[RMDB]
RNA sequence: GGGAACGACUCGAGUAGAGUCGAAAAUGCCGUGGUUAUCAUAGGGGUCCUUCACCAGAAUUUCAAGGACACCUCCAUGCAGAAGACUAUACCUCUGGUGGCCCUCACACUCACAUCUUACCUGGGCGAACGCAACGCAGUUCGCUGCGUUGCGUUCAAAAGAAACAACAACAACAAC
Reactivity to DMS in 0.01 (KOAc 150mM, MgCl2 10mM, bicine 150mM(pH8.5), 24C), signal-to-noise 1, nucleotides 027 to 126: u000g060c120c050g010u000g000g000u020u000a120u010c180a080u020a070g010g010g000g000u000c020c020u000u010c040a170c110c080a100g000a130a110u010u010u000c100a080a040g020g020a050c060a030c040c010u000c040c040a020u020g000c070a060g000a070a120g000a050c120u000a060u000a100c030c080u010c030u010g000g000u010g000g020c050c000c060u000c030a020c120a060c100u000c050a050c140a010u020c040u000u010a110c060c020u000g000g000g030c110
Reactivity to 2A3 in 0.01 (KOAc 150mM, MgCl2 10mM, bicine 150mM(pH8.5), 24C), signal-to-noise 2, nucleotides 027 to 126: u060g010c010c030g030u050g010g070u170u250a120u210c090a120u160a100g000g000g040g020u000c050c000u060u040c040a050c120c010a030g130a180a250u160u230u170c070a080a020g020g000a000c000a070c010c010u000c020c000a050u060g040c010a020g000a230a020g020a040c030u060a060u060a220c000c050u050c020u010g000g000u090g060g000c000c000c040u030c000a000c000a000c000u030c000a070c020a120u000c040u090u080a100c040c000u010g020g100g040c040